[RMDB]
Source: RMDB library TTRDES, as collected in RNAgym. An RNA of 177 nucleotides, treated with 2A3 and DMS and read out base by base. The 2A3 profile rests on 6,902 reads. DMS adducts were read by reverse transcription with MarathonRT.

RNA sequence: GGGAACGACUCGAGUAGAGUCGAAAAAAAAGAUAUGGAGUUAGGGAGAGCCAGUGGUACGAAGAACAAGGCUCGGAAACGAGCCUUGGGAGUACCACGGCUCAUCGAUCUAACUCCUAAGUCAAAACAUAACAAAUCAGUUCGCUGAUUUGUUAUGAAAAGAAACAACAACAACAAC
Reactivity to 2A3 in 0.01 (KOAc 150mM, MgCl2 10mM, bicine 150mM(pH8.5), 24C), signal-to-noise 2, nucleotides 027 to 126: a000a000a020a040g070a040u100a040u090g000g000a000g000u000u000a010g060g020g010a060g010a010g020c020c140a150g020u000g020g000u010a010c020g180a300a130g000a090a020c000a010a000g000g000c020u000c000g010g010a010a040a010c010g010a030g040c110c010u000u000g000g000g000a010g000u000a000c000c020a000c000g010g000c000u010c010a000u030c000g000a010u020c000u010a000a000c000u020c000c000u010a070a000g000u020c010a030a010a040a090
Reactivity to DMS in 0.01 (KOAc 150mM, MgCl2 10mM, bicine 150mM(pH8.5), 24C), signal-to-noise 3, nucleotides 027 to 126: a050a040a100a090g000a040u010a300u010g000g000a030g010u000u000a000g000g010g000a170g010a010g020c010c000a120g050u000g010g010u000a000c000g010a130a160g010a100a150c010a010a010g000g010c000u010c000g000g000a060a060a130c010g020a010g020c000c000u000u000g000g000g000a130g010u000a000c000c010a000c000g010g010c000u000c030a000u020c150g010a160u010c000u000a000a010c000u000c000c000u000a020a070g020u000c030a090a100a130a210